[RMDB]
RNA sequence: GGGAACGACUCGAGUAGAGUCGAAAAUAAAUUAUAAAAGCUGAGAUGAGCUCAGCAAGGGUAUUUUUCGAUGGCGAAAGCCUCGUUCCCUAUCCCUUCCUCCGGAAACGGUAGCUUUUACACAUAAAGAGAGGAAGAUAUUCGUAUCUUCCUCUCUAAAAGAAACAACAACAACAAC
Reactivity to 2A3 in 0.01 (KOAc 150mM, MgCl2 10mM, bicine 150mM(pH8.5), 24C), signal-to-noise 1, nucleotides 027 to 126: u000a020a010a010u190u180a160u070a210a140a050a090g010c020u000g000a000g010a070u120g080a050g180c020u010c010a000g000c020a000a000g020g000g000u030a030u030u000u000u000u030c000g020a010u060g000g000c010g020a110a050a000g020c000c000u000c000g000u030u000c000c000c030u000a060u210c000c000c010u000u000c000c020u000c000c000g060g060a040a120a120c020g000g000u060a040g000c020u100u090u060u120a130c170a000c030a140u230a160a300
Reactivity to DMS in 0.01 (KOAc 150mM, MgCl2 10mM, bicine 150mM(pH8.5), 24C), signal-to-noise 2, nucleotides 027 to 126: u000a010a010a040u010u010a170u020a110a040a080a180g050c000u000g010a100g000a300u010g010a210g010c000u000c000a000g040c010a010a000g000g000g010u000a100u010u000u000u000u000c000g000a070u000g010g010c000g000a120a160a150g000c000c010u010c000g000u000u000c000c000c000u000a140u010c000c000c000u000u000c080c060u000c000c000g000g000a070a070a100c020g030g000u000a030g000c050u000u000u020u000a110c140a110c160a080u000a070a100

Conditions: 150 mM KOAc, 10 mM MgCl2 and 150 mM bicine (pH 8.5), 24 C. Structure probing data (2A3 and DMS) for a 177-nucleotide construct. DMS adducts were read by reverse transcription with MarathonRT. For DMS, 1,080 sequencing reads were counted. The data come from the RNA Mapping Database (RMDB), library M2PK90.